This 177-nucleotide RNA was probed chemically with 2A3 and DMS. For DMS the reverse transcriptase was MarathonRT. High DMS reactivity at an A or C suggests that its Watson-Crick edge is free. Source: RMDB libraries RFM100 and RFMREP, as collected in RNAgym. The reactions ran in a buffer of 150 mM KOAc, 10 mM MgCl2 and 150 mM bicine (pH 8.5), at 24 C.
[RMDB]
RNA sequence: GGGAACGACUCGAGUAGAGUCGAAAAGGAGCGCGGCCUGCCCAGAGUGCCUUCUAGAUCCUGGGUCAGGCGCCAAGCUCCCCAGCAUCAUGCAGGAAGCUGCAGCCCCGCAGAGUUAGGACAGCUCGUCAUUAGUUGAUUUCGAUCAACUAAUGACAAAAGAAACAACAACAACAAC
Reactivity to 2A3 in 0.01 (KOAc 150mM, MgCl2 10mM, bicine 150mM(pH8.5), 24C), signal-to-noise 9, nucleotides 027 to 126: g030g000a010g000c040g000c050g060g170c000c000u000g000c000c000c000a010g030a030g020u160g100c030c040u180u180c030u100a080g020a130u060c000c000u000g000g000g030u190c040a010g020g000c000g000c010c000a020a010g000c000u010c000c000c000c010a010g030c000a050u150c010a020u110g040c010a010g050g040a110a050g050c020u020g000c020a040g000c010c000c000c010g000c030a030g010a020g050u030u090a050g020g070a040c040a040g020c020u040c060
Reactivity to DMS in 0.01 (KOAc 150mM, MgCl2 10mM, bicine 150mM(pH8.5), 24C), signal-to-noise 6, nucleotides 027 to 126: g010g000a020g030c000g020c300g010g000c000c010u000g000c000c010c010a020g000a100g010u010g010c130c110u010u030c150u020a110g000a060u010c040c000u000g000g000g000u050c040a010g010g010c040g010c070c190a050a300g000c000u000c020c000c030c030a090g020c110a100u000c080a100u010g000c030a040g000g010a100a110g000c030u000g000c030a070g000c060c000c000c040g000c140a100g010a050g010u000u010a070g000g010a080c100a090g000c030u000c070